[RMDB]
RNA sequence: GGGAACGACUCGAGUAGAGUCGAAAAGGGCUGUCCGUCGCCCCCCGCGGUCCUGGCCAGCGCAUGGUCCAACACGGAGAGCGCCCGCGCGCGGUCGGCGUCCGACAGCCCGGCGGCGUGGGGCAGGAAAGAAGAAACUGUUCGCAGUUUCUUCUUUAAAAGAAACAACAACAACAAC
Reactivity to 2A3 in 0.01 (KOAc 150mM, MgCl2 10mM, bicine 150mM(pH8.5), 24C), signal-to-noise 4, nucleotides 027 to 126: g000g000g000c000u000g010u000c010c020g000u010c000g000c010c000c000c010c000c000g000c010g000g020u150c030c070u110g050g010c030c030a030g000c060g030c090a090u140g130g050u070c030c010a120a080c100a060c240g060g010a070g010a030g040c030g020c000c020c020g020c000g010c000g000c020g030g010u070c050g010g000c000g000u020c010c020g000a020c000a000g000c000c000c000g000g000c010g020g000c010g030u070g000g000g010g000c040a030g040g090
Reactivity to DMS in 0.01 (KOAc 150mM, MgCl2 10mM, bicine 150mM(pH8.5), 24C), signal-to-noise 7, nucleotides 027 to 126: g020g000g010c000u000g020u000c010c240g000u010c020g000c020c000c060c170c020c020g010c020g020g000u020c050c070u020g000g010c030c040a110g010c080g000c060a090u020g000g010u010c000c040a100a100c180a120c150g010g000a050g000a140g020c060g010c040c020c300g010c050g000c070g010c100g000g010u010c300g010g010c020g000u000c030c130g010a030c010a020g000c010c000c000g000g000c040g000g000c020g000u000g000g000g000g010c070a080g000g000
Structure probing data (2A3 and DMS) for a 177-nucleotide construct. For 2A3, 6,460 sequencing reads were counted. The data come from the RNA Mapping Database (RMDB), library OK1LIB.